[RMDB]
RNA sequence: GGGAACGACUCGAGUAGAGUCGAAAAAUGCUGAUGCAGUCGGGACCUAUUCAACGGGCGCUGGCCUGAUAUAGUACGGGACUAUGGACGUCAGCGCUUCAGCAGCUCAUUUUCGCUUUGGCGUUGAUCUUGGGAGGGGGUUCGCCCCCUUCCAAGGAAAAGAAACAACAACAACAAC
Reactivity to DMS in 0.01 (KOAc 150mM, MgCl2 10mM, bicine 150mM(pH8.5), 24C), signal-to-noise 8, nucleotides 027 to 126: a060u020g000c030u010g000a060u020g010c090a070g020u010c040g000g000g000a160c040c030u010a100u030u030c140a070a060c120g000g000g000c020g020c020u010g010g000c020c030u020g000a280u060a010u000a020g010u010a120c180g020g000g010a190c010u000a030u000g010g000a270c300g000u010c010a000g000c010g000c010u000u010c030a040g000c030a060g000c050u020c070a090u010u000u010u000c030g010c030u000u000u020g000g000c040g000u000u000g000a060
Reactivity to 2A3 in 0.01 (KOAc 150mM, MgCl2 10mM, bicine 150mM(pH8.5), 24C), signal-to-noise 4, nucleotides 027 to 126: a000u060g000c030u040g010a050u060g010c020a030g050u010c010g000g010g040a050c000c000u030a080u020u070c030a030a010c030g000g000g000c010g000c000u000g000g010c010c030u060g020a000u020a000u010a030g030u010a060c070g040g050g040a000c000u000a000u030g020g020a010c020g000u000c000a000g000c000g000c000u030u020c000a000g000c010a000g000c000u020c050a110u020u020u030u000c020g000c020u030u020u090g050g010c020g010u000u000g020a040